Chemical mapping of a 177-nucleotide RNA with DMS and 2A3.
[RMDB]
RNA sequence: GGGAACGACUCGAGUAGAGUCGAAAAGAGCUUUUUUUCGAAAAAGCUCCGGCGCAAUGCCUAUGUGUACACUUCACAACGGUUUGUGGUGGUCAAUGGCAAUACCAGCAAUCUUCGGAUUGCUGAAGUCAUCGAUAUUCUUCGGAAUAUCGAUGACAAAAGAAACAACAACAACAAC
Reactivity to DMS in 0.01 (KOAc 150mM, MgCl2 10mM, bicine 150mM(pH8.5), 24C), signal-to-noise 2, nucleotides 027 to 126: g020a000g040c000u000u000u010u000u000u000u000c180g010a000a010a010a010a020g000c000u000c010c010g020g030c080g020c140a050a050u010g000c020c000u000a130u000g050u010g000u010a120c100a050c050u010u020c030a020c040a040a130c250g010g000u000u010u000g010u000g010g030u000g000g010u010c060a050a090u000g030g010c030a080a060u000a060c170c000a010g020c000a000a010u000c000u000u010c160g000g020a000u000u000g000c000u000g010a040a100
Reactivity to 2A3 in 0.01 (KOAc 150mM, MgCl2 10mM, bicine 150mM(pH8.5), 24C), signal-to-noise 1, nucleotides 027 to 126: g000a000g010c000u000u040u020u030u020u060u210c150g040a020a000a010a010a000g030c000u000c000c000g030g000c000g000c080a040a150u110g000c010c020u060a160u150g120u010g050u050a050c070a060c180u040u090c040a020c020a110a100c140g200g020u070u160u050g010u070g040g120u000g060g000u090c020a000a180u040g020g040c010a080a030u080a220c080c000a010g000c000a000a000u030c010u030u080c180g090g010a000u000u000g000c000u000g010a000a000
For DMS the reverse transcriptase was MarathonRT. For DMS, 1,241 sequencing reads were counted. Conditions: 150 mM KOAc, 10 mM MgCl2 and 150 mM bicine (pH 8.5), 24 C. The 2A3 profile rests on 1,078 reads.